[RMDB]
RNA sequence: GGGAACGACUCGAGUAGAGUCGAAAAGGUGCCAUGUAUAAAGGCAAACCAAUUCUUUGGGUCAAUAAAGCAUCUUAUGAUACUAAUCUUAAUAAGUUCAAUAGAGCUAGUUUGCGUCAAAUUUUUGGAGGUCAUCCCUUCGGGGAUGACAAAAGAAACAACAACAACAAC
Reactivity to 2A3 in 0.01 (KOAc 150mM, MgCl2 10mM, bicine 150mM(pH8.5), 24C), signal-to-noise 3, nucleotides 027 to 129: g050g020u000g000c000c000a050u100g110u030a120u130a170a050a050g000g000c000a040a060a130c000c010a000a010u090u020c040u100u000u060g090g000g000u020c000a000a000u030a070a080a020g010c030a080u030c000u000u100a070u090g000a040u040a080c040u110a060a000u070c040u070u150a120a090u210a110a080g000u080u000c000a000a050u000a030g020a000g000c000u030a070g080u030u050u000g000c010g190u050c010a030a030a050u050u060u010u000u050g030g000a050g040
Reactivity to DMS in 0.01 (KOAc 150mM, MgCl2 10mM, bicine 150mM(pH8.5), 24C), signal-to-noise 3, nucleotides 027 to 129: g050g010u030g010c140c000a140u060g020u100a100u000a060a170a080g010g090c010a040a160a110c000c030a000a000u020u010c010u000u020u010g000g040g020u000c050a140a000u030a100a090a040g000c000a040u010c060u010u000a140u030g010a120u140a000c030u000a150a140u030c270u040u050a120a040u030a120a070g010u030u030c010a030a300u040a050g010a080g010c000u030a040g070u000u000u000g010c080g050u000c000a000a000a000u000u070u000u040u010g010g000a180g020